[RMDB]
RNA sequence: GGGAACGACUCGAGUAGAGUCGAAAAGAUAUGGAGAGAUUUGGGACAUGAUCGAUCAUUCGGAAACGAAUGACCGAUCAACAGCCCACUGAUCUCUCCUAAGUCAAAAGCUCACUUCGGUGAGCAACAUAAAGUCAAUGUUCGCAUUGACUUUAUGAAAAGAAACAACAACAACAAC
Reactivity to 2A3 in 0.01 (KOAc 150mM, MgCl2 10mM, bicine 150mM(pH8.5), 24C), signal-to-noise 6, nucleotides 027 to 126: g010a010u040a030u120g010g010a010g010a000g000a010u020u050u110g020g000g020a050c210a300u300g000a040u000c010g000a010u000c000a000u000u010c010g000g020a040a040a040c010g000a000a000u010g000a010c000c010g000a000u000c000a000a010c010a010g020c000c000c000a010c040u030g020a010u000c000u000c000u010c000c000u010a030a000g020u000c010a000a070a140a120g000c010u010c010a000c010u050u130c300g110g000u010g000a000g010c000a000a000
Reactivity to DMS in 0.01 (KOAc 150mM, MgCl2 10mM, bicine 150mM(pH8.5), 24C), signal-to-noise 9, nucleotides 027 to 126: g010a020u000a300u010g000g010a010g000a020g010a020u000u000u000g000g010g000a040c100a300u020g010a000u000c000g010a020u000c000a010u000u000c000g010g000a080a060a180c000g020a020a010u000g000a000c010c000g010a010u000c000a020a050c300a180g000c000c000c000a030c300u000g010a010u000c000u000c000u000c000c000u000a010a060g000u010c030a130a070a140a160g000c010u000c000a010c000u000u010c250g020g010u000g000a000g020c010a050a050

Record summary: Structure probing data (2A3 and DMS) for a 177-nucleotide construct. As a SHAPE reagent, 2A3 marks flexible, mostly unpaired nucleotides at the ribose 2'-OH. The RNA was probed in 150 mM KOAc, 10 mM MgCl2 and 150 mM bicine (pH 8.5) at 24 C. DMS (dimethyl sulfate) methylates the pairing face of unpaired adenines and cytosines.